[RMDB]
RNA sequence: GGGAACGACUCGAGUAGAGUCGAAAAGAUGGGUCCGAUGGAUUAAUGCGUCGCCUGCCAUUGGAUCCUGAUUGAUAGAUUGAAGGCGACGGUCGGAUCACUCGGUAAUUCGGUGCUCUACGAGUGAUCCGUGAUGAUAGUUAAGACGAGCACCUAACAUAUGAGCAUAGUUCGCUAUGCUCAUAUGAAAAGAAACAACAACAACAAC
Reactivity to 2A3 in 0.01 (KOAc 150mM, MgCl2 10mM, bicine 150mM(pH8.5), 24C), signal-to-noise 8, nucleotides 027 to 156: g090a040u130g000g000g000u000c000c000g000a000u010g010g010a020u060u230a150a120u300g110c010g000u000c000g000c000c000u000g020c010c000a000u000u000g010g010a000u000c010c000u010g020a010u010u150g050a040u030a200g110a090u010u250g120a070a010g000g000c000g000a000c010g000g010u020c000g000g000a000u000c000a000c000u000c000g040g050u110a130a120u170u190c070g000g000u000g000c000u010c000u010a000c000g000a000g000u000g000a000u000c000c000g000u010g020a030u060g000a020u050a140g130u220u180a100a040g070a070c070g000a000g010c010a000c000c000u000a060a010
Reactivity to DMS in 0.01 (KOAc 150mM, MgCl2 10mM, bicine 150mM(pH8.5), 24C), signal-to-noise 2, nucleotides 027 to 156: g010a120u000g010g000g000u000c010c010g040a040u040g000g020a090u000u000a030a050u000g030c000g040u000c030g030c000c000u010g010c000c010a020u010u000g030g010a010u000c000c000u010g000a080u000u000g030a190u020a150g010a240u010u020g010a100a010g000g000c010g030a050c010g010g030u000c000g000g000a030u000c000a040c010u000c000g020g000u000a040a110u000u000c050g020g040u010g040c060u010c000u000a050c010g000a030g000u000g010a030u000c010c000g030u020g000a050u010g000a140u010a100g020u000u010a100a170g010a110c060g020a080g030c000a030c010c000u000a050a200
Structure probing data (2A3 and DMS) for a 207-nucleotide construct. DMS adducts were read by reverse transcription with MarathonRT. The reactions ran in a buffer of 150 mM KOAc, 10 mM MgCl2 and 150 mM bicine (pH 8.5), at 24 C. It was measured as part of the RMDB library OK3TST. Values cover nucleotides 27 to 156.